[RMDB]
RNA sequence: GGGAACGACUCGAGUAGAGUCGAAAACUACUGCUUGGCGAACGAUGACACGUUUGUUCUGGCAUCAGAUAUUGAUCAUGGCAUUUUGUCGUUCCAAUGUAGCUGGAAUGGCUUGCCGGAGACAUUGCACUCCUCCUAUGCUAAACGUGUCCCCGUCACGAUACUGUUAGUUCGCUAACAGUAUCGUAAAAGAAACAACAACAACAAC
Reactivity to DMS in 0.01 (KOAc 150mM, MgCl2 10mM, bicine 150mM(pH8.5), 24C), signal-to-noise 4, nucleotides 027 to 156: c040u000a100c050u020g020c040u000u000g020g010c030g020a050a040c050g010a100u000g020a080c050a060c020g010u000u020u010g010u000u000c070u000g020g010c040a090u000c040a110g010a140u000a100u000u000g020a190u010c040a140u000g020g020c020a120u000u000u000u000g020u000c000g030u000u000c000c000a020a160u000g030u000a080g010c120u000g010g020a040a030u000g030g010c000u010u010g000c030c030g000g010a100g010a090c050a100u000u020g020c070a120c050u000c050c000u000c020c030u000a050u000g000c050u000a030a060a050c040g010u000g010u000c000c020c000c000g000u010c070
Reactivity to 2A3 in 0.01 (KOAc 150mM, MgCl2 10mM, bicine 150mM(pH8.5), 24C), signal-to-noise 9, nucleotides 027 to 156: c050u160a050c040u060g110c040u040u090g040g010c030g040a120a050c050g100a140u150g010a010c010a010c030g020u020u040u050g180u130u120c100u100g040g000c020a020u070c060a020g070a070u110a080u180u220g090a090u100c090a160u190g020g000c020a030u040u070u080u260g010u010c000g000u000u000c010c000a030a060u280g060u210a120g060c100u020g000g000a010a020u010g010g000c000u020u030g000c010c000g010g000a020g000a010c100a130u090u300g020c110a040c040u030c010c000u030c010c010u040a030u060g000c020u090a040a030a010c000g000u000g010u020c010c000c000c010g020u020c010

An RNA of 207 nucleotides, treated with DMS and 2A3 and read out base by base. The reactions ran in a buffer of 150 mM KOAc, 10 mM MgCl2 and 150 mM bicine (pH 8.5), at 24 C.